RNA sequence: GGGAACGACUCGAGUAGAGUCGAAAAAGUCCGGACUCCACAGGGCAGGGUGUUGGCUAACAGCCAUCCACGGCAACGUGCGGAAUAGGGCCACAGAGACGAGUCUUGCCGCCGGGUUCGCCCGGCGCCAUUUGUAGGAGUUCGCUCCUACAAAUGGAAAAGAAACAACAACAACAAC
Reactivity to DMS in 0.01 (KOAc 150mM, MgCl2 10mM, bicine 150mM(pH8.5), 24C), signal-to-noise 3, nucleotides 027 to 126: a070g000u010c010c020g010g000a130c070u000c030c020a070c060a100g020g010g040c050a060g000g000g020u010g010u000u010g010g020c020u000a090a100c240a150g030c010c000a040u000c110c030a090c030g010g000c090a080a110c080g010u000g010c100g000g000a040a070u000a130g000g000g020c020c050a060c130a050g000a110g000a110c040g010a040g000u010c010u000u000g010c080c010g010c000c000g020g000g000u000u010c240g020c000c000c000g010g000c000g000
Reactivity to 2A3 in 0.01 (KOAc 150mM, MgCl2 10mM, bicine 150mM(pH8.5), 24C), signal-to-noise 2, nucleotides 027 to 126: a000g070u040c000c010g030g050a060c030u050c040c010a050c020a130g020g060g000c030a020g040g050g000u070g030u130u040g060g000c040u050a180a040c050a130g000c010c000a020u020c000c020a020c040g010g000c000a070a010c050g060u030g010c030g020g010a050a080u120a110g050g020g020c000c020a040c020a040g070a020g010a030c040g010a030g050u030c000u040u110g070c030c030g050c000c010g000g000g040u010u070c140g050c010c000c000g020g000c000g000
The data come from the RNA Mapping Database (RMDB), library RFMREP. The record gives the reactivity of an RNA of 177 nucleotides to DMS and 2A3. For 2A3, 2,094 sequencing reads were counted. For DMS the reverse transcriptase was MarathonRT. 2A3 adducts were read by reverse transcription with SuperScript II with manganese.